[RMDB]
RNA sequence: GGGAACGACUCGAGUAGAGUCGAAAAGAAAGAAAAUAAUAAGAGGUAGAGAGAGCUUCUCAGUCAAAAAGCCGGAAGAGUGCAUAACAGGAAUAAAUGUGCUACGGCGAUUUCCUGUUAGAGAAAAGGGAUAAUGUUACUUCGGUAACAUUAUCCCAAAAGAAACAACAACAACAAC
Reactivity to DMS in 0.01 (KOAc 150mM, MgCl2 10mM, bicine 150mM(pH8.5), 24C), signal-to-noise 2, nucleotides 027 to 126: g000a030a050a060g010a100a080a100a070u030a020a110u040a120a100g010a050g000g010u000a060g000a110g010a070g000a160g040c060u000u010c000u000c000a140g000u010c120a060a070a200a150a070g010c020c010g000g080a050a090g000a070g020u000g000c060a080u000a030a000c010a010g000g000a030a030u030a020a100a080u010g020u030g020c000u020a030c170g020g020c020g010a130u020u010u000c000c000u000g000u010u000a020g010a160g010a040a030a150a080
Reactivity to 2A3 in 0.01 (KOAc 150mM, MgCl2 10mM, bicine 150mM(pH8.5), 24C), signal-to-noise 2, nucleotides 027 to 126: g040a050a040a000g060a010a100a070a000u260a090a020u210a060a070g060a030g090g050u160a000g030a020g000a000g000a000g060c030u080u000c000u050c000a000g120u000c040a030a150a080a000a000g000c000c000g010g060a030a000g030a000g110u120g020c030a050u000a030a010c020a040g030g030a140a000u090a090a040a060u180g100u170g180c030u030a000c050g030g020c000g000a030u000u000u000c000c000u000g000u030u050a050g020a000g050a020a100a050a060
The data come from the RNA Mapping Database (RMDB), library OK1LIB. An RNA of 177 nucleotides, treated with DMS and 2A3 and read out base by base. DMS adducts were read by reverse transcription with MarathonRT. The 2A3 profile rests on 704 reads. Reactivities are given for positions 27 through 126. The reactions ran in a buffer of 150 mM KOAc, 10 mM MgCl2 and 150 mM bicine (pH 8.5), at 24 C. Values are in units of 0.01, from 0 to 300, in steps of 10.